An RNA of 177 nucleotides, treated with DMS and 2A3 and read out base by base.
For 2A3, 2,516 sequencing reads were counted.
It was measured as part of the RMDB library OK2TST.
The RNA was probed in 150 mM KOAc, 10 mM MgCl2 and 150 mM bicine (pH 8.5) at 24 C.

RNA sequence: GGGAACGACUCGAGUAGAGUCGAAAAUUGAGAAGACGCUUCGUGGCAACGUCCCCAUCGACAUCGACCUGAACAACCGGGGCACCCAGGCCAAGAUGGCGGCUCUCAUGGCCGCUCUCAAGGCCCAGUCAUAUGGUUCUUUCGAGAACCAUAUGACAAAAGAAACAACAACAACAAC
Reactivity to DMS in 0.01 (KOAc 150mM, MgCl2 10mM, bicine 150mM(pH8.5), 24C), signal-to-noise 3, nucleotides 027 to 126: u010u000g010a090g010a140a140g020a110c060g000c060u000u000c090g020u010g020g010c050a040a050c050g010u010c020c040c010c100a070u000c090g000a040c100a100u000c040g020a040c040c010u000g020a130a080c110a040a080c100c060g000g020g020g020c060a130c010c030c010a110g020g030c010c020a010a300g010a000u000g010g000c010g000g030c010u000c190u000c270a130u000g000g020c000c000g010c000u010c250u000c000a010a300g000g010c000c010c130a120
Reactivity to 2A3 in 0.01 (KOAc 150mM, MgCl2 10mM, bicine 150mM(pH8.5), 24C), signal-to-noise 2, nucleotides 027 to 126: u060u050g040a050g000a080a020g040a030c040g010c080u020u040c050g120u100g070g000c060a050a040c000g010u060c010c030c020c030a050u050c050g010a000c010a050u020c020g040a060c010c020u080g040a150a060c020a030a010c050c020g010g000g000g000c000a070c000c020c040a040g000g020c000c010a020a010g000a000u030g010g010c030g020g000c030u060c010u030c140a060u160g050g020c000c010g000c020u000c000u000c010a010a000g000g000c000c000c000a000